[RMDB]
Chemical mapping of a 177-nucleotide RNA with 2A3 and DMS. Source: RMDB library OK2TST, as collected in RNAgym. DMS adducts were read by reverse transcription with MarathonRT.
RNA sequence: GGGAACGACUCGAGUAGAGUCGAAAAUGGAGAUGGAUUUGAGUAUCUCCCUUAAAGAGCGCGAGCUUUUACAGUAUCAAUAUUACGAAAUCAAACGCUUUUUUGAUCGGGUGAAGGUAUCGCCUAGGCUGGGAGAUAAAUUCGUUUAUCUCCCAGCAAAAGAAACAACAACAACAAC
Reactivity to 2A3 in 0.01 (KOAc 150mM, MgCl2 10mM, bicine 150mM(pH8.5), 24C), signal-to-noise 2, nucleotides 027 to 126: u130g010g010a010g000a010u030g130g000a080u140u100u240g050a060g020u070a010u000c000u020c000c000c000u120u200a140a180a040g100a020g020c120g000c000g000a010g000c000u000u040u000u000a020c010a030g080u170a020u030c000a020a020u090a080u190u040a020c000g060a070a100a080u100c110a090a070a070c060g040c060u070u070u000u010u000u030g040a030u010c050g230g000g070u000g000a010a010g020g050u050a200u300c010g000c020c000u050a040g110
Reactivity to DMS in 0.01 (KOAc 150mM, MgCl2 10mM, bicine 150mM(pH8.5), 24C), signal-to-noise 2, nucleotides 027 to 126: u000g010g000a010g000a030u000g030g000a190u000u000u000g000a220g020u000a020u000c010u000c000c000c150u020u030a080a110a100g010a070g000c170g010c030g000a130g000c040u000u010u000u020a040c000a150g000u010a010u000c070a040a020u010a040u000u020a030c040g000a040a060a090u010c220a110a110a080c040g000c070u000u000u020u000u000u000g000a050u000c060g020g000g000u000g000a010a050g000g020u000a070u000c040g020c000c050u000a030g020